[RMDB]
RNA sequence: GGGAACGACUCGAGUAGAGUCGAAAAUUUACACAAAUGUAAGAAAUUCUACCAAGGAGUCCCCUUACCUAACAGCAUCUCACAAGGCUGCACCAGAUUCCAGAAAAGGCUUCUCUUGAUACAUCAACCCUAAUGUAACGUUCGCGUUACAUUAGGGAAAAGAAACAACAACAACAAC
Reactivity to DMS in 0.01 (KOAc 150mM, MgCl2 10mM, bicine 150mM(pH8.5), 24C), signal-to-noise 1, nucleotides 027 to 126: u000u000u000a050c050a150c260a160a150a060u010g000u000a020a020g010a070a170a000u000u000c020u000a060c010c050a080a050g000g000a110g020u000c010c020c030c020u010u010a060c000c020u020a060a100c140a030g010c070a050u000c050u000c050a110c020a060a130g000g000c010u000g030c080a050c090c070a110g030a150u000u020c000c070a060g010a080a050a090a090g000g030c110u000u000c060u000c030u000u000g010a110u000a000c080a030u000c210a050a130
Reactivity to 2A3 in 0.01 (KOAc 150mM, MgCl2 10mM, bicine 150mM(pH8.5), 24C), signal-to-noise 1, nucleotides 027 to 126: u000u000u020a060c020a030c040a040a300a120u240g000u010a030a030g030a050a240a020u070u020c030u030a070c000c020a080a020g160g000a080g010u030c000c010c050c080u000u080a100c000c000u010a020a030c010a000g010c010a060u040c010u000c040a040c050a070a020g090g010c030u010g000c000a000c000c000a000g030a100u080u150c020c020a020g090a070a100a050a040g070g000c050u060u050c010u000c000u040u100g000a030u030a130c020a060u090c010a100a060
Source: RMDB library RFMREP, as collected in RNAgym. The record gives the reactivity of an RNA of 177 nucleotides to DMS and 2A3. For DMS, 564 sequencing reads were counted. The reactions ran in a buffer of 150 mM KOAc, 10 mM MgCl2 and 150 mM bicine (pH 8.5), at 24 C.